This 207-nucleotide RNA was probed chemically with 2A3. Reactivities are given for positions 27 through 156. Source: RMDB library VIROID, as collected in RNAgym.

[RMDB]
RNA sequence: GGGAACGACUCGAGUAGAGUCGAAAACCUUUGGCUACUACCCGGUGGAAACAACUGAAGCUUCAACGCCUUUUUUUCCAAUCUUCUUUAGCACCGGGCUAGGGAGUAAGCCCGUGGAACCUUAGUUUUGUUCCCUCGGGACUUACUUGUGGUUCCUCUCCAUUUAUAAGUUCGCUUAUAAAUGGAGAAAAGAAACAACAACAACAAC
Reactivity to 2A3 in 0.01 (KOAc 150mM, MgCl2 10mM, bicine 150mM(pH8.5), 24C), signal-to-noise 2, nucleotides 027 to 156: c000c000u030u060u080g070g000c030u070a060c000u000a010c140c000c010g000g020u040g010g140a150a070a050c060a060a040c060u070g050a110a040g060c040u300u230c120a140a130c060g080c010c040u070u030u100u050u040u110u060c080c040a140a210u030c050u140u030c010u050u190u130a120g060c020a000c000c000g030g000g000c000u010a000g000g000g010a010g000u010a000a000g000c000c000c000g000u000g010g000a010a010c010c000u200u080a260g050u150u240u160u210g050u030u010c000c000c030u060c020g000g000g050a050c010u020u000a000c000u000u050g050u050g000g060u020u070c000c000u000